About this RNA
An RNA of 207 nucleotides, treated with 2A3 and read out base by base. Reactivities are given for positions 27 through 156. 2A3 adducts were read by reverse transcription with SuperScript II with manganese.

RNA sequence: GGGAACGACUCGAGUAGAGUCGAAAAGCACGACCAGGGCGCGUCGACCAACACAGGCACGUUCGUACGCACCGACCCGGCCGACGAGCGCACCGAAACCGACUACCAGCGCAUCACUUUCGUGGUUGGCACGGUGGCGGGUGAGCAGCCGCUGCCGGAGCUCAUAGGUGUUCGCACCUAUGAGCUCAAAAGAAACAACAACAACAAC
Reactivity to 2A3 in 0.01 (KOAc 150mM, MgCl2 10mM, bicine 150mM(pH8.5), 24C), signal-to-noise 2, nucleotides 027 to 156: g050c060a040c060g030a020c070c050a070g000g030g020c030g000c010g050u000c070g020a140c000c080a140a120c070a020c040a090g060g020c070a020c070g000u080u040c050g040u190a070c090g030c060a110c000c000g050a110c030c000c030g030g000c030c010g040a090c010g000a040g030c010g000c000a060c030c060g000a100a040a000c040c000g030a030c040u080a090c000c040a050g060c070g000c110a040u080c030a050c040u060u250u220c060g060u020g000g050u060u060g040g000c090a020c070g000g000u000g010g000c010g000g000g060u090g040a040g040c030a010g000c000c010g000c010u020g000c010c000g030